[RMDB]
RNA sequence: GGGAACGACUCGAGUAGAGUCGAAAAUCGUUGGUACUAAGCCUCAUGAUGUUGUCGAAGCCGUCAUACUUGAUAUCGUCAUCGUACAUGUUUCGGGCGGCCGGCAUAUUCGAGAACGCGGGAGUAAAUGGGGAAGUGGGAGUGUCCAGGAAGGUGACAUUAAUAUGCGAUUCGUCGCAUAUUAAUGAAAAGAAACAACAACAACAAC
Reactivity to DMS in 0.01 (KOAc 150mM, MgCl2 10mM, bicine 150mM(pH8.5), 24C), signal-to-noise 2, nucleotides 027 to 156: u010c040g060u000u010g010g040u000a100c090u010a120a110g010c000c030u010c030a100u010g020a050u020g010u000u000g000u010c010g010a050a110g050c030c020g030u010c060a140u000a160c050u000u000g020a110u010a060u000c100g010u000c080a110u010c090g000u000a060c050a090u000g010u000u000u010c040g010g030g020c030g030g030c000c060g000g000c020a030u000a040u000u000c020g010a110g030a070a080c070g020c060g010g020g020a100g010u000a050a020a080u000g000g020g020g020a040a060g040u010g100g000g000a080g000u000g000u020c010c020a080g000g030a060a060g030g010u000g030a170
Reactivity to 2A3 in 0.01 (KOAc 150mM, MgCl2 10mM, bicine 150mM(pH8.5), 24C), signal-to-noise 5, nucleotides 027 to 156: u080c040g020u020u050g020g040u080a100c070u110a040a050g020c010c000u060c040a080u160g020a030u040g020u090u030g030u030c030g070a170a040g010c040c010g040u020c010a050u080a220c020u110u110g060a100u150a060u140c100g220u140c070a120u110c120g070u110a010c020a040u060g060u050u090u080c050g030g010g000c000g020g000c010c000g000g020c010a030u060a060u040u070c050g020a000g010a100a030c070g000c050g030g060g000a040g080u110a050a090a140u130g010g010g010g020a060a040g040u090g050g010g000a030g010u050g020u040c050c040a030g050g050a040a020g020g010u040g010a000
Structure probing data (DMS and 2A3) for a 207-nucleotide construct. For 2A3, 2,703 sequencing reads were counted. The DMS profile rests on 4,705 reads. 2A3 is a SHAPE reagent: it acylates the 2'-hydroxyl of flexible nucleotides of all four kinds. It was measured as part of the RMDB library OK3TST.